An RNA of 207 nucleotides, treated with DMS and 2A3 and read out base by base.
RNA sequence: GGGAACGACUCGAGUAGAGUCGAAAAACAAACUCUCAGCUUUACAACGCUUAACUAAUCACGAGUAAAAUUUCUAGUACUCGGACCAAACGAAUACUAUGAUAUCUUCAGAAGCAGGUUCUAGACCCUGAACCCUAGACUCUAGAAAGUAUUCAGCCAUGUACCAAAACUUCGGUUUUGGUACAUGAAAAGAAACAACAACAACAAC
Reactivity to DMS in 0.01 (KOAc 150mM, MgCl2 10mM, bicine 150mM(pH8.5), 24C), signal-to-noise 2, nucleotides 027 to 156: a150c070a130a050a100c060u000c020u000c020a130g040c050u000u000u010a100c090a080a120c040g080c030u010u000a080a220c070u000a090a120u000c050a110c040g010a030g000u010a030a090a070a080u010u000u000c030u020a040g060u010a000c010u000c030g010g010a120c180c300a050a080a210c020g000a020a010u000a030c020u000a110u000g020a060u000a050u000c060u010u010c050a080g000a060a120g020c040a080g040g020u010u000c020u000a110g010a070c140c010c010u010g000a040a140c000c010c030u000a100g020a080c040u010c030u010a060g010a170a080a160g000u000a060u010u000c030a050g000c090
Reactivity to 2A3 in 0.01 (KOAc 150mM, MgCl2 10mM, bicine 150mM(pH8.5), 24C), signal-to-noise 4, nucleotides 027 to 156: a000c040a010a080a020c010u000c000u010c030a030g050c030u110u130u290a080c070a150a040c050g020c020u090u140a120a040c070u110a140a080u150c060a040c140g020a010g030u050a030a060a120a180u070u170u090c050u000a040g030u000a000c000u000c000g030g030a050c040c110a110a060a030c040g010a000a010u020a020c040u050a050u170g090a050u060a080u090c070u140u070c070a050g020a130a020g060c020a010g000g010u010u030c010u040a060g040a170c070c000c000u010g020a010a020c010c010c000u030a060g040a080c020u000c000u030a010g030a040a070a000g020u030a120u060u010c000a000g080c040
For 2A3 the reverse transcriptase was SuperScript II with manganese.
The RNA was probed in 150 mM KOAc, 10 mM MgCl2 and 150 mM bicine (pH 8.5) at 24 C.
The 2A3 profile rests on 1,836 reads.